[RMDB]
RNA sequence: GGGAACGACUCGAGUAGAGUCGAAAAGCUGUGUUAUGAUGGUUUGAUGCAUCAUAGUCUGAGUAGUGAUCCUCAGACACACAGCACAGACAGUAUGUCUCUAUGGAUCACUACAUAGAGGCUUGUGCAUCAAACCACAAGCACAUACUGUAGCUGAAAUUAUCACGUGAUUCGUCACGUGAUAAUUAAAAGAAACAACAACAACAAC
Reactivity to 2A3 in 0.01 (KOAc 150mM, MgCl2 10mM, bicine 150mM(pH8.5), 24C), signal-to-noise 9, nucleotides 027 to 156: g040c040u010g000u000g050u100u060a250u160g200a200u020g020g010u010u000u010g010a010u000g010c000a010u060c060a090u190a050g000u010c010u030g110a010g040u010a000g000u000g000a010u010c010c010u020c030a000g000a000c010a000c000a000c000a000g140c060a030c020a060g160a030c020a010g050u060a040u040g000u000c010u000c040u080a120u160g000g000a000u010c010a010c010u000a000c010a020u270a030g220a010g040g000c000u010u020g000u000g000c000a010u000c000a000a000a000c000c000a000c000a000a000g000c000a000c000a000u140a070c090u140g080u170a030g020c030u040g020a050
Reactivity to DMS in 0.01 (KOAc 150mM, MgCl2 10mM, bicine 150mM(pH8.5), 24C), signal-to-noise 4, nucleotides 027 to 156: g000c050u010g000u000g020u010u010a070u000g000a120u010g010g020u000u000u000g010a050u000g020c010a020u010c090a130u000a030g020u000c000u000g000a150g040u000a040g030u000g000a060u000c030c000u010c090a020g010a040c020a120c010a040c000a100g010c020a210c300a140g010a130c030a190g040u000a020u000g010u000c010u010c020u000a080u010g000g010a110u000c060a030c030u000a030c010a070u010a100g010a060g010g020c000u010u000g020u000g000c000a070u000c090a040a050a050c030c010a000c010a030a090g000c100a110c010a050u000a040c050u010g020u010a100g010c040u010g010a160
Record summary: Chemical mapping of a 207-nucleotide RNA with 2A3 and DMS. The data come from the RNA Mapping Database (RMDB), library OK3TST. The reactions ran in a buffer of 150 mM KOAc, 10 mM MgCl2 and 150 mM bicine (pH 8.5), at 24 C.